This 177-nucleotide RNA was probed chemically with 2A3.
For 2A3 the reverse transcriptase was SuperScript II with manganese.
The 2A3 profile rests on 572 reads.
Values cover nucleotides 27 to 126.

[RMDB]
RNA sequence: GGGAACGACUCGAGUAGAGUCGAAAACCCUUUCCACAACAUUGAAGAACAAGCAUGUCCUCGGCCAUUAGGCUGUUGUGGGCAGCGUCCUGUAUAUUCCUACAACUUCCCAAAGCCAAAAUGGCUCGCGGCGAAUGUGGUUCGCCACAUUCGCCGCAAAAGAAACAACAACAACAAC
Reactivity to 2A3 in 0.01 (KOAc 150mM, MgCl2 10mM, bicine 150mM(pH8.5), 24C), signal-to-noise 1, nucleotides 027 to 126: c000c040c000u000u070u000c000c000a010c020a120a010c010a090u080u250g160a110a020g000a060a030c030a000a000g070c010a070u130g040u000c000c060u060c000g020g000c000c090a070u080u210a100g050g000c000u000g010u060u020g110u040g030g000g000c010a000g050c050g040u060c000c000u030g020u000a060u000a000u220u000c000c040u030a050c010a180a070c000u020u000c040c000c000a080a050a000g000c000c000a090a000a000a050u180g000g030c000u010c010